[RMDB]
RNA sequence: GGGAACGACUCGAGUAGAGUCGAAAAGAAAGAGCUAGUAAUCCUUCUUUGCAAAGUCAUUUAUUAUUUUUCCUUCAAUUACUAUAAUCAAUGACUUUGCAAAGAUAGAUUUACUAGCUAAAUCUAAAUAUAAACCCAGUUUCGACUGGGUUUAUAUAAAAGAAACAACAACAACAAC
Reactivity to 2A3 in 0.01 (KOAc 150mM, MgCl2 10mM, bicine 150mM(pH8.5), 24C), signal-to-noise 3, nucleotides 027 to 126: g070a040a120a000g130a000g020c000u000a010g000u000a000a000u000c010c010u000u010c000u000u000u000g000c010a000a000a000g000u000c000a000u000u010u020a010u000u010a030u020u070u010u090u090c070c040u160u240c080a160a180u250u070a060c020u010a000u010a010a000u000c030a000a000u000g000a000c000u010u000u000g000c000a000a000a000g000a000u000a000g000a000u030u010u020a000c000u000a000g000c000u010a000a000a000u000c000u000a010a000
Reactivity to DMS in 0.01 (KOAc 150mM, MgCl2 10mM, bicine 150mM(pH8.5), 24C), signal-to-noise 2, nucleotides 027 to 126: g020a090a120a100g010a030g000c010u000a000g000u000a030a010u010c010c020u000u000c000u000u000u000g010c000a000a000a020g000u000c000a010u000u000u000a010u000u000a010u000u010u010u030u030c130c100u030u040c130a080a090u030u060a080c110u030a010u000a000a000u000c030a010a010u010g000a010c010u010u010u000g000c000a010a000a020g000a020u000a030g000a030u000u020u020a000c000u010a010g030c000u000a000a030a070u010c000u020a070a070